[RMDB]
RNA sequence: GGGAACGACUCGAGUAGAGUCGAAAAGUUUCUAAGUUCGCUUAGAAACAAAUCCAGCGCGGAAACGAACGUGCCUGACGCUAUUCGUUAAAGAUUUUCAAAAAACGUUCCUCUUCGGAGGAACGAAUCUAUAACCGAGGUUCGCCUCGGUUAUAGAAAAAGAAACAACAACAACAAC
Reactivity to 2A3 in 0.01 (KOAc 150mM, MgCl2 10mM, bicine 150mM(pH8.5), 24C), signal-to-noise 2, nucleotides 027 to 126: g010u000u000u020c000u010a000a020g020u020u140c150g040c050u000u000a000g020a000a000a030c010a000a020a030u060c010c030a020g020c050g000c010g030g100a120a070a020c050g060a040a010c010g040u020g030c000c070u170g040a070c040g010c100u140a080u120u070c000g030u040u080a070a050a060g050a230u040u060u020u130c080a090a040a060a060a040a060c010g000u000u000c000c010u000c010u020u040c160g130g000a010g000g000a000a000c000g000a000a010
Reactivity to DMS in 0.01 (KOAc 150mM, MgCl2 10mM, bicine 150mM(pH8.5), 24C), signal-to-noise 2, nucleotides 027 to 126: g000u000u000u000c000u000a000a000g010u000u010c280g040c010u000u000a000g000a030a000a010c000a080a090a110u000c050c040a210g010c100g020c010g010g010a100a040a030c120g010a060a030c080g010u000g000c060c060u030g010a070c090g010c090u020a080u000u000c020g010u000u000a080a110a170g010a160u010u010u000u000c050a000a070a070a080a080a110c000g000u000u000c000c000u000c010u000u000c150g000g000a010g000g010a020a000c000g000a000a000